[RMDB]
RNA sequence: GGGAACGACUCGAGUAGAGUCGAAAACCCGUAGGGGAGAAUAGAACACCGGGGGGUGAUCCACCAGGAGAAGGAGCGGAGAACCCACCUCCAGAGGACCCCUUCAGCGAACAGAAGGGCUCCUCCUAAAUCAAGGUCUUCGGACCUUGAAAAAGAAACAACAACAACAAC
Reactivity to 2A3 in 0.01 (KOAc 150mM, MgCl2 10mM, bicine 150mM(pH8.5), 24C), signal-to-noise 3, nucleotides 027 to 129: c020c000c020g000u060a060g000g030g040g000a020g000a070a110u130a070g070a120a010c020a010c050c000g010g000g000g000g000g010u010g000a020u040c030c000a020c020c030a030g020g050a030g030a080a040g040g010a020g070c060g010g020a050g020a070a020c010c000c000a030c000c010u070c020c030a020g000a000g010g000a010c000c000c010c000u000u000c010a030g030c020g090a050a040c020a110g000a010a000g000g000g000c000u000c000c000u020c000c000u100a060a050a020
Reactivity to DMS in 0.01 (KOAc 150mM, MgCl2 10mM, bicine 150mM(pH8.5), 24C), signal-to-noise 4, nucleotides 027 to 129: c060c000c010g040u050a000g000g000g000g000a050g020a090a070u000a110g060a110a090c040a060c000c000g000g000g000g000g000g000u000g000a120u020c070c050a100c130c060a110g030g030a020g040a120a060g040g020a070g000c060g030g000a090g030a170a110c060c060c010a120c060c010u000c040c000a110g000a030g010g000a040c170c000c010c010u000u000c020a030g020c060g020a000a000c050a130g000a020a000g020g010g040c230u000c000c010u020c010c080u060a030a050a130